An RNA of 207 nucleotides, treated with 2A3 and read out base by base. The RNA was probed in 150 mM KOAc, 10 mM MgCl2 and 150 mM bicine (pH 8.5) at 24 C. For 2A3 the reverse transcriptase was SuperScript II with manganese. Values cover nucleotides 27 to 156.
RNA sequence: GGGAACGACUCGAGUAGAGUCGAAAAUAACUUAAACUUUGAAGAUAACAACAACGGAGGAUCACAAAAAGAUAUUCCACCAUUUAUGGAUAUCAAACUCGGAGACAACAAGUUACGCAUUCUUGAUGUGGCUCCUCAUAUGUACAACGAAUGGUACGUCACCCCUACUUUUCGAAGUAGGGGUGACAAAAGAAACAACAACAACAAC
Reactivity to 2A3 in 0.01 (KOAc 150mM, MgCl2 10mM, bicine 150mM(pH8.5), 24C), signal-to-noise 1, nucleotides 027 to 156: u050a000a000c020u070u050a060a060a050c140u170u260u180g000a010a000g030a040u200a280a000c050a240a020c030a090a000c160g070g000a000g030g010a050u090c050a050c070a060a050a000a050a000g000a000u050a000u100u080c030c000a020c030c030a010u050u300u180a090u180g050g000a000u000a000u010c000a070a240a000c000u000c080g020g000a000g010a090c000a040a000c000a030a030g010u020u060a090c100g040c150a030u000u050c000u000u000g020a020u090g020u070g010g040c100u020c030c030u020c000a030u160a050u210g010u000a030c020a070a000c120g110a070a000u160g100g000u000a000c000